[RMDB]
RNA sequence: GGGAACGACUCGAGUAGAGUCGAAAAACGAGGCAGCCGAAGUUUCCGCCGGCAUCCAGUAGACCAACGUCGUCAUUGUAAAUUGGAAUUCCGCGGAUCAGGUUAUGACACUCAGUGGCUCGUCCGGGAAGGACCAGCUUUUCGAAGCUGGUCCUUCAAAAGAAACAACAACAACAAC
Reactivity to 2A3 in 0.01 (KOAc 150mM, MgCl2 10mM, bicine 150mM(pH8.5), 24C), signal-to-noise 3, nucleotides 027 to 126: a000c040g060a020g030g000c030a000g010c000c000g040a090a040g030u120u110u000c010c010g040c070c070g030g000c030a000u000c000c000a010g020u060a010g040a070c020c050a160a110c160g130u170c070g050u100c080a030u000u170g130u220a160a130a130u040u000g070g000a080a190u110u040c000c000g010c000g010g000a010u070c000a000g040g040u020u090a060u130g010a000c010a000c170u040c010a050g030u010g050g000c020u030c050g080u010c070c000g070g000
Reactivity to DMS in 0.01 (KOAc 150mM, MgCl2 10mM, bicine 150mM(pH8.5), 24C), signal-to-noise 1, nucleotides 027 to 126: a140c110g000a030g030g000c010a040g000c010c000g000a120a120g030u070u000u000c010c010g000c140c000g000g030c300a070u000c000c050a020g000u000a010g030a280c260c030a000a030c130g110u000c110g070u010c140a150u030u040g000u000a020a150a050u030u000g000g000a030a210u000u000c050c000g030c050g000g000a000u000c000a160g000g040u000u000a120u000g090a080c100a030c050u000c030a030g000u050g000g030c080u000c170g060u000c030c000g000g000